[RMDB]
This 207-nucleotide RNA was probed chemically with 2A3. The RNA was probed in 150 mM KOAc, 10 mM MgCl2 and 150 mM bicine (pH 8.5) at 24 C.
RNA sequence: GGGAACGACUCGAGUAGAGUCGAAAAAACAAGAUGUUGGAACUAUGGGCCGAUCUCAUUAGGCCGGGUUCGGGUUGGCUAUUCACUGGCCUGCCCAUUCCAAGUCGGGAGUUGAGGGUUCGGGCUCGAGCGAAGGCUUGUGGUUCGGGCAUUCUUACUACUACUCACAGUUCGCUGUGAGUAGUAGAAAAGAAACAACAACAACAAC
Reactivity to 2A3 in 0.01 (KOAc 150mM, MgCl2 10mM, bicine 150mM(pH8.5), 24C), signal-to-noise 1, nucleotides 027 to 156: a010a000c190a080a000g050a040u090g020u160u100g050g000a010a000c020u030a150u080g010g000g000c000c010g000a100u000c050u000c060a110u100u140a020g040g000c010c000g010g030g050u080u070c050g000g020g000u010u020g000g000c000u030a090u300u300c150a110c240u030g040g000c000c000u020g000c030c000c000a000u020u020c020c000a020a040g180u140c070g000g000g060a140g030u160u160g040a150g010g030g060u020u080c040g010g010g000c000u010c120g010a020g000c060g100a040a040g010g000c000u000u060g020u040g060g050u030u000c040g060g030g030c000a010u070u000c000u000u000a010